Chemical mapping of a 177-nucleotide RNA with 2A3 and DMS. For 2A3, 2,174 sequencing reads were counted. The data come from the RNA Mapping Database (RMDB), library RFMREP. The RNA was probed in 150 mM KOAc, 10 mM MgCl2 and 150 mM bicine (pH 8.5) at 24 C.
RNA sequence: GGGAACGACUCGAGUAGAGUCGAAAACAUCACCAACACGAUGCCUCAUCGAAGCAAAAGGUUCGCUGAAUUAUGAUUGCGUGGCACGCUCGGUCAAGCUCGUGUGGUAUCACACACAUGGCGCCAGCAUCAGCCAAACGUUCGCGUUUGGCUGAUGAAAAGAAACAACAACAACAAC
Reactivity to 2A3 in 0.01 (KOAc 150mM, MgCl2 10mM, bicine 150mM(pH8.5), 24C), signal-to-noise 2, nucleotides 027 to 126: c000a040u090c040a000c010c040a060a060c040a000c040g020a030u100g030c000c010u030c030a040u050c010g070a100a010g040c040a080a060a080a000g080g020u060u040c040g010c030u070g100a160a110u270u070a150u180g120a080u030u150g050c050g010u030g010g000c020a010c080g000c010u000c030g000g050u050c040a020a010g000c020u000c030g010u010g000u020g010g000u050a090u170c070a060c000a000c010a000c010a030u080g010g060c020g000c020c000a000g000
Reactivity to DMS in 0.01 (KOAc 150mM, MgCl2 10mM, bicine 150mM(pH8.5), 24C), signal-to-noise 2, nucleotides 027 to 126: c090a090u040c100a050c050c020a120a020c060a040c020g000a050u010g040c050c050u010c300a020u010c070g010a050a100g000c030a040a030a110a080g020g000u000u000c010g050c070u000g010a120a080u020u000a040u000g000a180u010u000g000c020g060u000g000g030c020a080c110g000c020u000c050g010g010u000c120a070a090g010c030u010c090g010u010g030u000g000g010u000a040u030c090a070c070a060c020a040c030a060u010g000g000c040g000c080c030a080g000
The DMS profile rests on 1,527 reads.
For 2A3 the reverse transcriptase was SuperScript II with manganese.